[RMDB]
RNA sequence: GGGAACGACUCGAGUAGAGUCGAAAAGGAGAGGGGAACCGAGGGGGGUUCGAACUCAAGAAGAGAAGAUUUUCGAGGAAAUACUCCCAAGAAGUUCCCGGAGGGAUCCAAGAGACGGAUGACUUUCAGAGGGACAAGUUCGCUUGUCCCAAAAGAAACAACAACAACAAC
Reactivity to DMS in 0.01 (KOAc 150mM, MgCl2 10mM, bicine 150mM(pH8.5), 24C), signal-to-noise 3, nucleotides 027 to 129: g060g070a030g000a080g000g000g000g000a000a000c020c070g000a160g020g000g040g060g000g020u000u010c000g040a070a000c060u050c070a010a110g010a050a040g080a000g010a000a000g000a090u000u000u000u000c000g020a120g000g020a020a080a070u050a080c110u010c040c060c090a030a030g010a080a120g010u000u000c040c010c010g020g000a000g020g000g040a050u010c030c000a080a060g020a140g000a060c110g070g050a060u010g010a110c180u000u030u020c110a100g000a260
Reactivity to 2A3 in 0.01 (KOAc 150mM, MgCl2 10mM, bicine 150mM(pH8.5), 24C), signal-to-noise 2, nucleotides 027 to 129: g010g020a010g000a010g010g020g010g000a000a000c030c030g010a100g020g010g010g000g000g000u030u020c040g030a070a000c020u010c070a060a020g040a070a000g090a030g010a060a020g000a020u040u040u000u020c050g000a030g010g030a040a080a010u060a090c030u010c000c020c000a010a020g060a020a020g030u010u010c000c000c000g000g010a000g000g020g000a010u000c000c000a060a000g050a000g030a100c070g010g000a020u050g040a090c030u020u100u050c060a040g010a070
Overview: An RNA of 170 nucleotides, treated with DMS and 2A3 and read out base by base. For 2A3, 5,080 sequencing reads were counted. For DMS, 9,508 sequencing reads were counted. It was measured as part of the RMDB library 15KLIB. 2A3 adducts were read by reverse transcription with SuperScript II with manganese. The RNA was probed in 150 mM KOAc, 10 mM MgCl2 and 150 mM bicine (pH 8.5) at 24 C.